An RNA of 177 nucleotides, treated with 2A3 and DMS and read out base by base. The reactions ran in a buffer of 150 mM KOAc, 10 mM MgCl2 and 150 mM bicine (pH 8.5), at 24 C.

RNA sequence: GGGAACGACUCGAGUAGAGUCGAAAAGUGAUCAGUAAUUGGACACGGGUGAGUCGAUCCUAAGAGAUAGGAUAAUUCCGUUUGAAAGCUGGGCUGUUUGAGGCGUGGGGUUCGUCCUUGCGUUUUGGAAUAGCGGAUCUUUCGAGAUCCGCUAUUCAAAAGAAACAACAACAACAAC
Reactivity to 2A3 in 0.01 (KOAc 150mM, MgCl2 10mM, bicine 150mM(pH8.5), 24C), signal-to-noise 2, nucleotides 027 to 126: g160u160g000a130u080c030a000g070u080a120a180u130u140g020g000a000c000a010c070g020g000g050u160g020a050g080u090c060g060a000u000c000c000u030a040a000g160a010g040a100u060a050g050g000a000u020a030a050u190u030c010c010g010u000u130u150g110a050a030a000g000c000u030g000g070g010c000u000g040u100u180u150g110a060g020g030c000g000u070g000g000g000g020u040u050c100g000u050c000c000u000u020g010c020g030u000u000u030u110g110
Reactivity to DMS in 0.01 (KOAc 150mM, MgCl2 10mM, bicine 150mM(pH8.5), 24C), signal-to-noise 1, nucleotides 027 to 126: g020u020g000a030u010c060a110g020u070a070a180u080u060g000g000a060c020a060c030g000g000g010u020g010a060g000u020c030g010a140u000c000c030u000a040a100g000a110g000a080u000a040g000g000a030u020a030a070u030u000c020c020g010u000u000u010g000a060a110a070g020c020u020g020g010g030c020u020g000u020u010u040g000a060g000g000c010g040u000g000g000g000g000u000u000c060g020u010c010c050u000u020g000c090g000u000u000u020u020g000